[RMDB]
RNA sequence: GGGAACGACUCGAGUAGAGUCGAAAAGGCUUACGAGGAGCUGCGGCUGCAUGAUGCGCUGGAGGCUGUGGUGGCCAUUGCCGGCCGGGGCAACCUCUACAUGGAGCAAAUGGCGCCAUGGACCGCGCAUGCGCAAUUCCUUCGGGAAUUGCGCAUGAAAAGAAACAACAACAACAAC
Reactivity to 2A3 in 0.01 (KOAc 150mM, MgCl2 10mM, bicine 150mM(pH8.5), 24C), signal-to-noise 2, nucleotides 027 to 126: g020g010c030u030u060a010c110g010a050g080g000a040g010c000u060g080c040g040g000c030u090g010c000a070u110g020a080u080g030c030g020c080u120g000g110a030g090g000c020u020g010u060g060g110u080g120g000c010c010a030u010u140g060c050c000g030g030c020c000g090g000g060g000c040a070a090c060c000u050c010u000a030c020a090u150g060g010a090g000c020a030a170a110u120g050g020c010g000c020c000a010u010g050g010a030c020c020g010c050g000
Reactivity to DMS in 0.01 (KOAc 150mM, MgCl2 10mM, bicine 150mM(pH8.5), 24C), signal-to-noise 2, nucleotides 027 to 126: g010g000c030u000u010a130c120g010a120g010g010a100g000c050u010g000c060g020g000c040u010g030c060a070u000g010a100u010g010c040g010c020u000g020g000a100g000g010c060u000g030u000g010g010u000g000g020c010c010a070u000u020g000c120c070g020g000c070c090g020g000g010g020c050a050a060c070c040u000c050u000a050c090a110u000g020g000a080g020c070a060a070a080u010g000g010c000g010c010c000a020u000g000g000a090c070c050g000c030g000